The data come from the RNA Mapping Database (RMDB), library M2RFPK. Chemical mapping of a 207-nucleotide RNA with 2A3 and DMS.
RNA sequence: GGGAACGACUCGAGUAGAGUCGAAAAGAAAGAAAGAAAGAAAUCUGACAGAAUGACGGAUUCGAUCGUUGUGGUCGGCGGGGCACCACGUCAUUCCUUCGCACUGUCUCCGGGCAGACCGCCAUAAAAAAGCGGAUCUACUUCGGUAGAUCCGCAACUAAUGAUGCUAGUUCGCUAGCAUCAUUAGAAAAGAAACAACAACAACAAC
Reactivity to 2A3 in 0.01 (KOAc 150mM, MgCl2 10mM, bicine 150mM(pH8.5), 24C), signal-to-noise 5, nucleotides 027 to 156: g040a000a080a000g060a040a080a020g050a040a110a020g060a040a110a030u070c070u100g020a040c040a050g090a110a060u060g010a020c020g030g030a040u110u100c100g050a090u120c060g010u050u100g020u030g020g100u070c060g000g010c030g020g000g000g010c040a020c050c000a020c010g020u010c010a010u050u010c010c010u070u120c060g020c030a050c050u020g010u030c010u020c050c040g040g000g000c010a020g040a060c010c030g000c010c000a050u220a020a100a010a010a020a010g000c000g000g010a000u000c000u010a000c020u020u060c150g050g000u000a000g000a000u000c000c010g000c000a000a000
Reactivity to DMS in 0.01 (KOAc 150mM, MgCl2 10mM, bicine 150mM(pH8.5), 24C), signal-to-noise 2, nucleotides 027 to 156: g030a130a080a130g000a110a090a070g010a120a090a120g000a130a120a080u000c060u000g010a260c050a100g010a040a020u000g020a050c020g030g010a090u000u000c040g040a080u020c070g050u000u020g040u010g000g000u000c020g020g010c070g060g010g020g010c060a040c020c040a030c010g000u020c010a050u000u000c020c040u000u000c090g040c070a170c050u030g010u000c020u000c040c070g010g020g000c000a090g010a040c050c030g090c020c020a160u020a000a040a120a040a110a160g030c010g050g000a040u000c000u000a020c010u000u000c230g020g020u000a020g010a010u000c000c000g020c010a000a000
2A3 adducts were read by reverse transcription with SuperScript II with manganese. For 2A3, 3,810 sequencing reads were counted. The reactions ran in a buffer of 150 mM KOAc, 10 mM MgCl2 and 150 mM bicine (pH 8.5), at 24 C.